[RMDB]
Conditions: 150 mM KOAc, 10 mM MgCl2 and 150 mM bicine (pH 8.5), 24 C. This 207-nucleotide RNA was probed chemically with DMS and 2A3. For 2A3 the reverse transcriptase was SuperScript II with manganese. For DMS the reverse transcriptase was MarathonRT.
RNA sequence: GGGAACGACUCGAGUAGAGUCGAAAAUACUUAGUACGCGCGUAGUUGCAGGCAUUCCGGGUGCAGCAACUGACGCGGAAGACUUUUCCCAGAGCGUGCGCUUCAACUGGCGUGCUGAGUAGUGCACGAAUUGCACGUACGUUCGCGUACGUGCAAACCAAACCAGUCAAUUCGUUGACUGGUUUGGAAAAGAAACAACAACAACAAC
Reactivity to DMS in 0.01 (KOAc 150mM, MgCl2 10mM, bicine 150mM(pH8.5), 24C), signal-to-noise 2, nucleotides 027 to 156: u000a080c070u000u000a050g020u000a070c000g050c000g020c010g040u020a060g030u000u000g030c020a200g000g000c020a050u000u000c040c300g010g060g100u000g000c010a300g000c010a020a020c010u000g010a030c020g030c000g020g010a040a160g000a120c090u020u010u000u000c000c000c010a240g000a120g020c030g010u000g030c010g040c010u000u000c030a080a110c030u000g040g020c090g030u000g000c000u000g000a060g010u000a030g010u000g010c030a070c000g020a070a160u010u000g040c030a010c000g000u000a010c000g010u000u000c260g040c020g000u000a000c000g000u000g010c010a010a010a090
Reactivity to 2A3 in 0.01 (KOAc 150mM, MgCl2 10mM, bicine 150mM(pH8.5), 24C), signal-to-noise 4, nucleotides 027 to 156: u110a010c010u020u010a020g000u010a010c000g010c010g000c000g040u020a010g000u000u010g010c060a170g110g000c010a030u100u110c120c170g200g100g000u000g020c020a010g020c010a010a000c020u090g150a040c000g020c010g000g000a010a010g150a060c020u130u080u020u020c020c010c020a020g050a010g040c010g000u000g000c010g000c040u050u080c070a220a170c070u060g060g010c010g000u000g010c000u000g000a010g020u060a010g010u020g020c000a000c010g010a020a060u040u010g000c010a000c000g000u010a000c010g000u020u030c240g010c010g100u010a000c020g000u000g000c000a010a010a000